Conditions: 150 mM KOAc, 10 mM MgCl2 and 150 mM bicine (pH 8.5), 24 C. An RNA of 177 nucleotides, treated with DMS and read out base by base. For DMS the reverse transcriptase was MarathonRT. The data come from the RNA Mapping Database (RMDB), library OK2TST.
RNA sequence: GGGAACGACUCGAGUAGAGUCGAAAAACGAGUGGGGUUACUCCAACCGGGUGGUCGACCUCGUGAAGAAGCUCGAACCCUACUGCUGAAACCUAUCGGGGGACGUCCCUCCCGGGAUGUCCCCCGCUAUGUAGAGCCGUUUCGACGGCUCUACAUAAAAAGAAACAACAACAACAAC
Reactivity to DMS in 0.01 (KOAc 150mM, MgCl2 10mM, bicine 150mM(pH8.5), 24C), signal-to-noise 1, nucleotides 027 to 126: a040c040g000a050g020u000g010g010g010g020u000u000a090c080u000c070c000a060a200c240c040g000g030g040u000g000g030u000c180g010a120c020c050u010c110g030u010g020a080a250g000a080a130g010c230u010c090g000a030a040c010c000c010u000a020c030u000g010c010u000g000a050a080a060c040c030u010a000u000c010g010g010g040g000g010a010c000g010u000c000c010c010u000c240c180c300g040g000g010a000u020g030u020c000c010c000c010c000g000c020